Structure probing data (2A3 and DMS) for a 207-nucleotide construct.

RNA sequence: GGGAACGACUCGAGUAGAGUCGAAAAAUAAUUCAGAAAGGAGAUUCCGCCCCAGCUUGCGGUGCGGCCGAAAGGCUGUAAGGCAUCCCGGAGAGGGGAGGCAAGGCGAAAGCCAAAGCUGUAGAGUAAUAGUGGGUCUUGUUCGCAAGACCCACAAGUAUUUACUCAGGUUCGCCUGAGUAAAUACAAAAGAAACAACAACAACAAC
Reactivity to 2A3 in 0.01 (KOAc 150mM, MgCl2 10mM, bicine 150mM(pH8.5), 24C), signal-to-noise 2, nucleotides 027 to 156: a000u160a020a050u110u130c030a040g100a090a080a020g080g040a080g050a080u090u020c010c000g000c020c010c010c010a000g000c010u020u020g000c000g020g000u010g000c000g030g000c000c000g030a010a010a010g000g000c000u000g010u020a040a060g030g000c000a010u020c000c020c020g100g020a090g030a030g020g030g000g000a000g030g000c010a010a010g000g000c010g030a080a000a000g000c000c010a000a000a000g010c010u020g050u160a040g030a010g100u140a070a140u100a150g010u000g000g020g000u000c000u010u030g020u040u080c160g020c070a000a000g000a000c010c000c000a000c000a000a000
Reactivity to DMS in 0.01 (KOAc 150mM, MgCl2 10mM, bicine 150mM(pH8.5), 24C), signal-to-noise 1, nucleotides 027 to 156: a090u000a080a080u010u000c020a050g000a090a120a070g020g000a120g000a230u000u000c010c020g020c000c040c090c010a090g040c020u000u000g030c060g020g010u000g010c000g010g020c000c000g000a180a040a290g030g030c000u010g000u010a050a060g000g010c020a040u010c040c000c040g100g020a150g040a180g080g000g040g000a030g010g020c060a080a110g030g000c060g000a070a090a180g020c000c020a030a050a090g000c050u000g010u000a060g000a220g020u010a090a060u000a130g020u000g000g030g000u000c020u000u010g000u000u010c270g100c030a040a010g000a030c000c000c000a000c000a000a180

The 2A3 profile rests on 1,619 reads. For DMS, 1,791 sequencing reads were counted. Reactivities are given for positions 27 through 156. The RNA was probed in 150 mM KOAc, 10 mM MgCl2 and 150 mM bicine (pH 8.5) at 24 C.